[RMDB]
RNA sequence: GGGAACGACUCGAGUAGAGUCGAAAAAACCAGAUGUUCCGACUGCUUUAUGCCGCAUAUGAUCUCGCGACCGCGAUUGCGGAGACGAUUGUGCGCGACCGCUUCGAGGGGACCCAGGAGCGAGUGCCGCGAUAAAUUAUUUCGAUAAUUUAUCGCGAAAAGAAACAACAACAACAAC
Reactivity to DMS in 0.01 (KOAc 150mM, MgCl2 10mM, bicine 150mM(pH8.5), 24C), signal-to-noise 6, nucleotides 027 to 126: a070a070c030c020a090g000a080u030g000u010u010c020c020g010a090c050u020g000c060u020u010u010a070u020g020c040c020g040c040a050u000a070u010g000a090u010c080u000c030g030c030g010a300c030c030g020c010g010a100u030u020g010c000g000g000a080g000a180c050g000a080u030u010g010u030g000c030g000c030g000a170c040c040g000c020u000u000c030g000a070g000g010g000g010a100c040c010c020a130g000g000a090g010c020g000a060g010u010g010c110
Reactivity to 2A3 in 0.01 (KOAc 150mM, MgCl2 10mM, bicine 150mM(pH8.5), 24C), signal-to-noise 9, nucleotides 027 to 126: a000a000c090c010a090g020a140u100g040u080u030c020c020g060a050c070u040g040c020u100u090u070a080u210g040c030c010g010c060a020u060a080u220g110a100u070c020u030c030g030c010g080a090c020c030g040c030g280a300u100u300g000c010g030g010a030g040a020c040g060a060u060u150g040u080g050c040g010c000g060a060c000c020g030c010u030u040c030g040a100g010g060g030g050a040c010c000c010a020g040g020a030g020c020g000a030g030u050g050c040

An RNA of 177 nucleotides, treated with DMS and 2A3 and read out base by base.
For DMS the reverse transcriptase was MarathonRT.
Source: RMDB library OK1LIB, as collected in RNAgym.
For 2A3, 11,023 sequencing reads were counted.
For DMS, 19,609 sequencing reads were counted.
For 2A3 the reverse transcriptase was SuperScript II with manganese.
Conditions: 150 mM KOAc, 10 mM MgCl2 and 150 mM bicine (pH 8.5), 24 C.